[RMDB]
RNA sequence: GGGAACGACUCGAGUAGAGUCGAAAAGCAGUUUCACUCACUGUAGACUCUGAGCGCAGAGUGUCAGUCGUGCUACCACAUGCACGUGAUCAGAGUAUGUGUGAACUCUGACUGACGACACAAUCGCUUGUGUCCUAUAUAAUGAAACUGGUGAGUCCACUAGGAUCUUCUUCGGAAGAUCCUAGUGAAAAGAAACAACAACAACAAC
Reactivity to DMS in 0.01 (KOAc 150mM, MgCl2 10mM, bicine 150mM(pH8.5), 24C), signal-to-noise 3, nucleotides 027 to 156: g000c000a000g000u000u000u000c010a070c020u000c060a090c100u010g010u000a020g000a050c010u000c000u000g010a300g020c080g040c070a040g010a130g000u000g020u000c030a020g040u000c040g010u010g010c030u000a280c120c110a090c140a050u000g000c000a160c040g040u000g030a140u010c060a050g000a100g010u000a040u000g010u010g020u010g020a090a080c010u010c020u030g040a050c010u000g010a060c020g010a040c000a020c010a020a150u000c100g010c100u000u000g000u000g000u010c030c040u000a020u000a040u000a020a080u000g000a020a000a020c020u000g020g010u000g010a150g000u000c010
Reactivity to 2A3 in 0.01 (KOAc 150mM, MgCl2 10mM, bicine 150mM(pH8.5), 24C), signal-to-noise 7, nucleotides 027 to 156: g070c000a000g000u010u000u000c010a020c030u020c010a080c050u010g000u010a000g000a000c000u020c010u010g040a060g170c060g000c050a010g000a010g020u000g000u000c000a000g010u010c000g010u000g000c010u080a130c020c090a050c020a090u060g010c000a020c090g070u150g090a130u150c060a030g020a010g040u020a050u110g200u030g050u050g080a040a030c010u000c040u060g000a020c000u000g000a000c010g000a000c000a000c000a010a120u270c060g010c190u020u020g000u000g000u000c000c000u000a010u010a010u010a030a030u020g000a000a010a010c010u010g020g110u070g050a030g110u020c030